[RMDB]
RNA sequence: GGGAACGACUCGAGUAGAGUCGAAAAUGACUGGCUGUGCGUGAACCGCACCAAGCUACAGUAGAGGUUUAAGAACUCUGCCUCGUUGUGGACGUAGCGAGAGCGUCGCCCAAUGCGUCCCAACAGCUCUCUAAGCUUUUCGAUGGAAGGAAUGGCCAGGGUAAAGAAGAUUCGUCUUCUUUACCCUAAAAGAAACAACAACAACAAC
Reactivity to DMS in 0.01 (KOAc 150mM, MgCl2 10mM, bicine 150mM(pH8.5), 24C), signal-to-noise 4, nucleotides 027 to 156: u000g010a120c060u010g050g050c020u000g020u000g030c020g000u020g010a150a300c200c050g000c000a070c020c040a070a050g010c000u010a050c110a100g010u000a060g020a060g010g010u000u000u000a080a110g020a110a060c030u000c020u000g020c010c020u000c060g020u000u000g040u010g020g010a070c030g040u000a090g050c080g000a080g000a120g030c060g030u010c060g030c010c000c040a110a120u000g020c040g020u010c010c010c000a060a050c050a080g030c020u000c020u000c020u000a090a100g010c030u000u010u000u000c040g020a110u020g010g000a090a100g010g000a050a080u000g010g010c020c090
Reactivity to 2A3 in 0.01 (KOAc 150mM, MgCl2 10mM, bicine 150mM(pH8.5), 24C), signal-to-noise 9, nucleotides 027 to 156: u170g030a010c020u020g020g010c010u020g000u010g030c010g030u140g110a100a050c050c000g000c010a000c010c010a060a010g020c020u110a080c040a030g020u070a020g010a040g050g070u090u150u160a130a060g040a100a040c030u020c030u090g020c000c020u040c050g010u030u030g060u180g020g010a020c010g010u050a020g030c010g020a020g000a010g060c040g060u040c040g040c020c030c010a010a030u070g000c000g010u010c010c010c010a030a040c010a020g020c000u020c000u020c040u140a090a050g030c020u050u060u040u100c060g050a060u100g050g070a030a050g050g030a060a070u110g040g000c010c020